[RMDB]
RNA sequence: GGGAACGACUCGAGUAGAGUCGAAAAGGAGACAACCCAGAGUUAGGUUAAGGUCCCAAAGUGCGAGCUAAGUGCGAUUGAAGGUGGUCUCGAGCCCUAGACAGCCGGGAGGUGAGCUUAGAAGCAGGAGCAACGCAUAAUUCGUUAUGCGUUGCUCAAAAGAAACAACAACAACAAC
Reactivity to DMS in 0.01 (KOAc 150mM, MgCl2 10mM, bicine 150mM(pH8.5), 24C), signal-to-noise 2, nucleotides 027 to 126: g000g000a110g000a080c050a030a070c020c010c010a150g000a180g000u020u000a050g010g040u030u000a130a080g000g010u000c000c000c010a080a080a160g020u010g010c080g000a080g030c030u000a020a060g020u010g030c060g000a080u020u030g010a080a110g000g020u020g040g010u020c000u010c020g010a130g000c030c010c000u000a080g030a060c090a050g010c060c010g000g000g000a120g000g010u000g000a130g010c080u000u000a120g010a060a060g020c110a060g000
Reactivity to 2A3 in 0.01 (KOAc 150mM, MgCl2 10mM, bicine 150mM(pH8.5), 24C), signal-to-noise 2, nucleotides 027 to 126: g060g020a040g000a000c030a020a010c050c020c060a000g020a010g060u130u160a060g030g030u030u110a080a040g010g060u010c000c010c040a120a000a000g040u090g030c130g020a050g000c080u150a140a010g020u000g110c070g080a060u000u040g080a050a030g060g020u010g000g020u000c000u000c020g050a040g000c030c000c000u010a020g040a050c000a000g030c040c000g010g000g000a010g000g050u060g050a060g000c030u050u080a070g040a130a030g020c070a030g000